[RMDB]
RNA sequence: GGGAACGACUCGAGUAGAGUCGAAAAAGCUACUUACGAGUAGCAGGAAGAUAGCCAGCGUUUGUUUUAUUUGGUAUGUUACUACUGCUGCAAGCUAUAUCAUAAGACACACGCGGCUAUUUUCCAAGUCUGCGCAAGACUUCGGUCUUGCGCAGACAAAAGAAACAACAACAACAAC
Reactivity to 2A3 in 0.01 (KOAc 150mM, MgCl2 10mM, bicine 150mM(pH8.5), 24C), signal-to-noise 1, nucleotides 027 to 126: a000g000c000u000a020c010u040u010a010c150g120a020g020u000a000g000c010a000g000g000a000a000g000a000u000a000g070c000c020a060g000c000g000u070u000u020g000u010u010u010u010a110u060u050u010g040g000u040a040u000g130u190u100a080c040u040a060c000u110g200c020u050g160c120a000a090g000c000u070a010u000a000u080c000a000u000a000a000g000a000c000a000c000a000c060g010c050g000g000c000u000a000u000u000u000u000c000c000a000a000
The record gives the reactivity of an RNA of 177 nucleotides to 2A3.
Values are in units of 0.01, from 0 to 300, in steps of 10.
2A3 adducts were read by reverse transcription with SuperScript II with manganese.
The RNA was probed in 150 mM KOAc, 10 mM MgCl2 and 150 mM bicine (pH 8.5) at 24 C.
For 2A3, 548 sequencing reads were counted.